[RMDB]
RNA sequence: GGGAACGACUCGAGUAGAGUCGAAAAUCGGCUGGCCGUCGACCCCGAGCGUGGCGGGGCGUUGUCGUCGCUGGUGCAGGACGGCCGCCAGCUGAUCGCCGCCGGCCGGGUAGCCAACGAGCUGGCCGCAUUAGCCUAUAUUCGUAUAGGCUAAUGCAAAAGAAACAACAACAACAAC
Reactivity to 2A3 in 0.01 (KOAc 150mM, MgCl2 10mM, bicine 150mM(pH8.5), 24C), signal-to-noise 6, nucleotides 027 to 126: u080c010g000g000c000u010g000g000c010c000g020u010c010g030a060c020c010c000c000g060a120g020c100g050u130g010g000c020g010g020g010g040c040g060u100u210g040u050c030g050u050c030g050c210u100g070g150u180g100c060a040g070g080a020c030g050g010c050c000g000c000c000a000g010c040u130g040a100u100c040g010c040c000g000c000c000g020g010c020c000g000g000g000u030a020g030c020c010a020a010c000g000a020g030c010u010g010g010c000c000
Reactivity to DMS in 0.01 (KOAc 150mM, MgCl2 10mM, bicine 150mM(pH8.5), 24C), signal-to-noise 6, nucleotides 027 to 126: u000c040g000g010c000u000g000g010c000c030g010u000c030g010a050c030c010c000c010g000a140g020c030g020u010g020g020c010g010g010g000g030c070g010u010u000g020u000c020g020u000c030g010c010u000g010g020u000g020c060a110g010g010a050c070g010g010c050c030g010c010c010a040g010c060u010g000a060u010c080g020c010c010g020c010c010g000g000c010c000g000g000g010u010a060g020c030c030a050a030c020g000a140g010c000u000g010g010c000c040
Chemical mapping of a 177-nucleotide RNA with 2A3 and DMS. The 2A3 profile rests on 27,239 reads. It was measured as part of the RMDB library OK2TST. For DMS the reverse transcriptase was MarathonRT.